Chemical mapping of a 170-nucleotide RNA with 2A3 and DMS.
High DMS reactivity at an A or C suggests that its Watson-Crick edge is free.
RNA sequence: GGGAACGACUCGAGUAGAGUCGAAAAAUUACUCGUGAAGAGGCUGUAAGGCAAGUUCGAAGCUGGAUAGGCUUCGAUGUUGAGGGUGCUCAUGCUUCCCGUAAUGCAUGUGGCACCAAUGUGCCUCGUAGAAUGUUCUUCGGAACAUUCAAAAGAAACAACAACAACAAC
Reactivity to 2A3 in 0.01 (KOAc 150mM, MgCl2 10mM, bicine 150mM(pH8.5), 24C), signal-to-noise 9, nucleotides 027 to 129: a000u140u120a090c030u020c060g090u100g180a150a070g010a030g020g020c040u070g070u170a060a020g060g010c020a060a080g080u040u020c010g000a000a000g010c010u070g080g150a240u230a220g020g000c000u000u000c010g000a000u010g050u040u050g060a110g000g070g010u020g000c000u000c000a000u000g000c010u050u040c060c040c010g050u200a080a060u220g000c000a000u010g020u160g050g010c010a010c000c000a000a020u070g010u060g030c010c000u010c000g010u000a020
Reactivity to DMS in 0.01 (KOAc 150mM, MgCl2 10mM, bicine 150mM(pH8.5), 24C), signal-to-noise 9, nucleotides 027 to 129: a060u040u020a040c050u010c030g000u050g010a120a090g000a030g020g020c040u020g020u040a090a060g000g030c050a050a060g000u000u000c020g010a000a000g010c000u000g000g040a160u070a100g020g000c000u000u020c010g010a000u030g020u010u000g000a130g000g000g000u000g020c000u000c010a020u000g010c000u000u000c020c060c070g010u020a070a040u040g030c000a010u010g000u060g000g000c020a000c000c040a010a010u020g010u020g000c030c000u010c000g000u010a130

The RNA was probed in 150 mM KOAc, 10 mM MgCl2 and 150 mM bicine (pH 8.5) at 24 C. For 2A3 the reverse transcriptase was SuperScript II with manganese. For DMS, 132,359 sequencing reads were counted.